An RNA of 177 nucleotides, treated with 2A3 and DMS and read out base by base. The reactions ran in a buffer of 150 mM KOAc, 10 mM MgCl2 and 150 mM bicine (pH 8.5), at 24 C. For 2A3 the reverse transcriptase was SuperScript II with manganese. DMS adducts were read by reverse transcription with MarathonRT.
RNA sequence: GGGAACGACUCGAGUAGAGUCGAAAACAUGGGGCAUGCUGUGUUCGCCCCUGCGCCUGGCAUCCUGGAGGGAAAAAGCAAGUGCUGUGGGCGGCGUGGCGGGCACCCGGCUCGGCCAGGCUCGCACAUUACUGACAGGAUUCGUCCUGUCAGUAAUAAAAGAAACAACAACAACAAC
Reactivity to 2A3 in 0.01 (KOAc 150mM, MgCl2 10mM, bicine 150mM(pH8.5), 24C), signal-to-noise 6, nucleotides 027 to 126: c030a110u170g000g000g010g010c040a050u090g030c070u060g040u030g040u300u220c040g000c000c000c000c000u010g000c010g000c000c010u040g080g040c010a030u030c010c020u120g100g110a200g070g050g000a050a110a040a030a000g100c050a070a030g030u030g070c020u020g010u230g040g000g030c010g020g000c020g020u020g010g010c020g020g020g000c020a120c010c030c020g010g000c040u040c020g050g000c000c010a030g020g030c020u020c030g030c000a060c000
Reactivity to DMS in 0.01 (KOAc 150mM, MgCl2 10mM, bicine 150mM(pH8.5), 24C), signal-to-noise 8, nucleotides 027 to 126: c090a070u010g010g010g000g010c030a080u010g010c050u000g010u010g010u000u010c070g010c010c000c010c010u000g000c040g010c000c020u000g000g010c050a100u000c030c020u000g010g020a160g010g000g000a020a040a080a120a100g010c050a080a060g010u000g010c020u000g010u010g020g000g010c030g010g000c040g010u000g010g020c030g000g010g010c030a060c030c020c020g000g000c030u000c040g000g000c010c020a050g010g010c020u000c050g010c100a090c170